Chemical mapping of a 207-nucleotide RNA with 2A3. The 2A3 profile rests on 1,175 reads. It was measured as part of the RMDB library M2RFPK. For 2A3 the reverse transcriptase was SuperScript II with manganese. The reactions ran in a buffer of 150 mM KOAc, 10 mM MgCl2 and 150 mM bicine (pH 8.5), at 24 C.
[RMDB]
RNA sequence: GGGAACGACUCGAGUAGAGUCGAAAACCAGCAGCCAUGACCUACCAGGCUGCGGUGCGGCUCGCCGCACAGGUCAUCCCUCAUCGGGCGCGUCCUGCGUCCUUCCACGCCAACCCACAAGGGAUCUAAAACACGUUGGGCUUCGGCCCAACGUGAAGCUAUGUGCAUUGUUCGCAAUGCACAUAGCAAAAGAAACAACAACAACAAC
Reactivity to 2A3 in 0.01 (KOAc 150mM, MgCl2 10mM, bicine 150mM(pH8.5), 24C), signal-to-noise 2, nucleotides 027 to 156: c000c000a020g000c010a000g000c000c030a140u140g020a070c040c040u180a190c150c090a030g010g000c000u000g000c010g000g000u000g010c000g000g020c090u160c260g030c020c010g000c000a020c020a010g030g000u030c030a070u050c070c000c000u070c080a100u130c080g000g020g000c000g000c000g090u240c080c110u240g000c000g010u010c010c040u040u030c020c020a030c070g050c010c020a070a070c000c030c000a070c050a180a130g000g020g020a050u040c130u280a080a000a000a050c020a000c010g000u010u000g000g000g010c000u010u070c160g080g000c000c020c010a000a000c000g010u000g000a010a000